[RMDB]
RNA sequence: GGGAACGACUCGAGUAGAGUCGAAAAGAUAUGGAGGUGUAUUGUUCGAUGAAGUCGGAAACGAUGGAGAAUGUACACGCCUCCUAAGUCAAACAUAUCCACCGAUGUUCGCAUCGGUGGAUAUGAACCUACUGUCUAGGUUCGCCUAGACAGUAGGAAAAGAAACAACAACAACAAC
Reactivity to DMS in 0.01 (KOAc 150mM, MgCl2 10mM, bicine 150mM(pH8.5), 24C), signal-to-noise 5, nucleotides 027 to 126: g000a030u010a300u010g000g000a020g020g020u000g020u000a050u010u010g030u000u000c000g000a120u010g010a160a220g010u000c010g010g010a100a080a190c030g000a020u000g000g010a080g000a010a020u000g010u000a030c040a020c040g010c030c010u000c000c000u000a020a080g000u000c030a110a110a260c000a000u000a000u000c010c000a000c000c000g020a010u000g010u000u000c250g020c000a010u000c000g000g010u000g000g000a000u000a000u000g000a050a150
Reactivity to 2A3 in 0.01 (KOAc 150mM, MgCl2 10mM, bicine 150mM(pH8.5), 24C), signal-to-noise 3, nucleotides 027 to 126: g050a020u110a030u230g000g000a030g010g000u030g050u040a100u170u270g070u050u030c140g100a300u060g030a020a010g010u000c010g000g000a090a050a060c000g010a000u030g010g000a020g000a000a000u030g000u050a040c040a010c140g060c020c010u010c000c000u010a130a010g030u020c050a070a070a050c020a010u000a000u000c000c000a010c000c010g000a010u010g060u090u130c300g010c160a000u010c000g000g010u000g000g000a000u000a000u000g000a000a000